[RMDB]
Record summary
Source: RMDB library RFMREP, as collected in RNAgym. The record gives the reactivity of an RNA of 177 nucleotides to DMS.
RNA sequence: GGGAACGACUCGAGUAGAGUCGAAAAUCGAAAGGAUUUGCGGUAGAGCACAUAGAAUGGGACCCGAAAGGUUGUGAACUAUGCUUGAGGAAGGCGAAGCCAGGGGAAACUCUGGUGGAGGCUUGUCGAUAGGAGUACGGUUCGCCGUACUCCUAUCAAAAGAAACAACAACAACAAC
Reactivity to DMS in 0.01 (KOAc 150mM, MgCl2 10mM, bicine 150mM(pH8.5), 24C), signal-to-noise 1, nucleotides 027 to 126: u010c030g010a120a260a060g010g020a010u000u010u010g040c050g000g050u000a060g020a070g000c100a100c050a030u000a100g020a050a130u000g010g020g000a010c010c000c050g000a090a120a110g070g060u010u000g000u000g000a090a120c050u010a040u000g000c050u010u000g000a160g000g010a030a000g010g010c030g010a260a270g010c010c010a010g020g010g000g010a080a040a090c010u000c010u000g010g000u000g000g000a250g000g000c010u000u010g020u000c130